[RMDB]
RNA sequence: GGGAACGACUCGAGUAGAGUCGAAAAGAAAGGCAGCUAGUGCAGCCCACGCAGUGGCAUGCUUUUGCAUGCCCAGUCGAGCCCACGACUGAGGGCAGCUGCGGCACUGAGGGCAGCUGCCGAAAGACCCUAUACGACUCUUCGGAGUCGUAUAGGGAAAAGAAACAACAACAACAAC
Reactivity to 2A3 in 0.01 (KOAc 150mM, MgCl2 10mM, bicine 150mM(pH8.5), 24C), signal-to-noise 2, nucleotides 027 to 126: g100a030a090a020g020g010c010a000g000c010u120a070g140u110g210c050a020g020c030c010c000a040c040g060c030a050g020u050g030g000c000a000u020g000c000u260u240u200u300g010c000a010u020g000c000c020c000a000g000u000c000g000a050g020c000c020c000a020c010g010a000c000u000g020a110g050g130g040c020a010g010c010u060g020c000g030g000c040a050c120u100g050a190g010g010g020c000a010g000c000u000g000c000c010g000a000a000a000g000a000
Reactivity to DMS in 0.01 (KOAc 150mM, MgCl2 10mM, bicine 150mM(pH8.5), 24C), signal-to-noise 2, nucleotides 027 to 126: g000a140a110a180g010g030c010a010g020c020u000a070g010u000g010c060a150g000c060c040c050a140c100g010c070a050g040u000g030g020c010a010u000g010c010u000u030u000u020g020c010a010u010g000c010c010c020a020g000u010c000g010a160g010c010c010c020a300c020g000a010c000u010g000a100g020g010g030c140a120g010c020u000g010c000g000g010c160a110c080u000g010a080g000g010g010c080a060g010c000u000g000c000c000g000a020a060a070g000a150